[RMDB]
RNA sequence: GGGAACGACUCGAGUAGAGUCGAAAAGAGUAGUAGUUCGCUACUACUCAAAGGCACAAAAGGCACAGUUCUAAAGUGCAUGGAACACGCCAUGUGCCCGUGAAAGUAAAUCCUUCGGGAUUUACAAGAAGUAGACAAAGUUCGCUUUGUCUACUUCAAAAGAAACAACAACAACAAC
Reactivity to 2A3 in 0.01 (KOAc 150mM, MgCl2 10mM, bicine 150mM(pH8.5), 24C), signal-to-noise 8, nucleotides 027 to 126: g000a000g000u000a000g000u000a000g000u020u050c190g020c100u000a000c000u000a000c000u000c000a010a020a010g000g000c010a010c000a020a140a030a090g010g000c010a030c060a090g010u000u000c030u080a160a150a150g300u280g180c040a050u160g010g000a020a000c020a010c060g010c000c010a020u020g010u000g000c000c000c010g080u110g140a100a010a000g000u000a000a000a010u000c000c000u000u060c140g060g000g000a000u000u000u000a000c000a000a030
Reactivity to DMS in 0.01 (KOAc 150mM, MgCl2 10mM, bicine 150mM(pH8.5), 24C), signal-to-noise 8, nucleotides 027 to 126: g010a010g010u000a000g020u000a010g010u000u010c240g020c000u010a010c000u000a000c000u000c000a030a090a080g000g000c010a000c000a030a050a120a110g000g010c010a180c180a150g010u000u000c010u000a050a090a160g030u010g010c240a090u010g000g010a010a020c020a230c170g000c010c000a100u010g000u000g000c000c000c080g000u010g000a070a090a090g000u000a010a010a010u000c000c000u000u010c230g020g000g000a010u000u000u000a000c000a080a080